[RMDB]
RNA sequence: GGGAACGACUCGAGUAGAGUCGAAAACGGUUAAUAGUCUUGUUAAACAAGCUAGUAAGAGCUCGUUCAAUUAGAGAUUUGGUUAUACCUGGUACGACUUCCAACAACGCUAAAUGAAUUGGUGCUCGUCCCAUAAGAUGUUCGCAUCUUAUGGGACAAAAGAAACAACAACAACAAC
Reactivity to DMS in 0.01 (KOAc 150mM, MgCl2 10mM, bicine 150mM(pH8.5), 24C), signal-to-noise 3, nucleotides 027 to 126: c090g020g000u040u000a060a090u000a020g000u020c010u000u010g000u010u000a130a100a300c010a010a010g010c010u000a030g010u010a090a110g000a010g010c010u000c030g010u000u010c010a020a060u000u000a040g010a050g000a120u000u000u000g010g020u000u000a070u000a120c030c050u000g020g000u010a130c200g020a110c060u000u000c020c000a020a060c160a060a070c060g000c010u000a030a030a070u000g000a020a050u010u000g010g000u000g020c020u000c030
Reactivity to 2A3 in 0.01 (KOAc 150mM, MgCl2 10mM, bicine 150mM(pH8.5), 24C), signal-to-noise 3, nucleotides 027 to 126: c020g030g010u160u150a110a040u030a130g050u060c000u020u010g050u050u280a140a180a050c010a000a000g000c000u020a010g090u140a170a020g020a000g030c010u010c020g020u000u000c030a040a040u020u030a020g020a020g030a090u020u060u120g040g010u070u030a130u050a080c000c040u030g090g020u060a060c070g050a050c130u060u000c030c010a010a020c030a050a040c070g000c030u020a050a040a020u050g060a010a030u090u200g060g000u070g060c000u030c060